[RMDB]
RNA sequence: GGGAACGACUCGAGUAGAGUCGAAAAAGGGGAACGUGAGCUGGGUUUAGACCGUCGUGAGACAGGUUGGUUGCUAUCUAAUGGAUGUGUUAGUAGUCUGAGGGGAAGGUGGCUCCAGUACGAGAGGACAGAUAACUAACUUCGGUUAGUUAUCUGUAAAAGAAACAACAACAACAAC
Reactivity to 2A3 in 0.01 (KOAc 150mM, MgCl2 10mM, bicine 150mM(pH8.5), 24C), signal-to-noise 9, nucleotides 027 to 126: a000g050g010g000g010a070a040c070g070u110g050a030g010c030u030g020g020g050u050u070u110a040g020a020c000c010g020u020c010g020u070g060a080g010a030c100a110g020g020u040u030g040g020u090u110g010c010u020a120u170c020u060a070a050u090g090g060a090u100g120u020g010u120u030a030g010u010a010g020u020c110u130g040a040g000g010g010g020a060a030g030g020u050g020g000c010u010c020c000a030g010u080a050c060g020a030g010a010g140g060
Reactivity to DMS in 0.01 (KOAc 150mM, MgCl2 10mM, bicine 150mM(pH8.5), 24C), signal-to-noise 9, nucleotides 027 to 126: a070g000g000g000g000a050a060c110g020u020g000a080g030c050u000g010g010g020u010u010u020a110g010a040c030c030g000u000c020g010u050g000a200g000a020c020a080g020g010u000u000g000g010u010u020g010c040u000a050u020c030u000a060a050u020g010g010a080u020g010u030g010u010u000a060g010u000a060g010u020c060u020g010a130g000g000g010g010a080a070g000g010u000g010g000c040u010c020c040a070g010u020a070c130g010a100g010a110g010g010
Structure probing data (2A3 and DMS) for a 177-nucleotide construct. The data come from the RNA Mapping Database (RMDB), libraries RFM100 and RFMREP. 2A3 adducts were read by reverse transcription with SuperScript II with manganese. The reactions ran in a buffer of 150 mM KOAc, 10 mM MgCl2 and 150 mM bicine (pH 8.5), at 24 C.